[RMDB]
RNA sequence: GGGAACGACUCGAGUAGAGUCGAAAAGAUAUGGAUGGCCCAUGGACAUGUUCGGUGUCGGAAACGACACCGAACAACAGCCAUGGCCAUCCUAAGUCAAAUCAAAGUGUGUUCGCACACUUUGAAACAGAUCAUCCUACUUCGGUAGGAUGAUCUGAAAAGAAACAACAACAACAAC
Reactivity to DMS in 0.01 (KOAc 150mM, MgCl2 10mM, bicine 150mM(pH8.5), 24C), signal-to-noise 1, nucleotides 027 to 126: g000a060u000a250u000g020g000a030u000g000g010c220c090c160a000u010g000g000a120c110a010u020g030u000u010c000g000g050u000g010u010c030g030g010a020a060a120c000g020a080c010a000c030c000g040a000a000c020a010a040c250a180g010c030c030a000u000g020g000c000c000a020u010c000c000u000a000a050g010u000c030a100a140a090u000c010a010a010a000g010u000g000u000g020u000u010c280g010c000a000c000a020c000u000u010u010g020a030a120a210
Chemical mapping of a 177-nucleotide RNA with DMS. The RNA was probed in 150 mM KOAc, 10 mM MgCl2 and 150 mM bicine (pH 8.5) at 24 C. The data come from the RNA Mapping Database (RMDB), library TTRDES. For DMS the reverse transcriptase was MarathonRT. The DMS profile rests on 1,106 reads. High DMS reactivity at an A or C suggests that its Watson-Crick edge is free.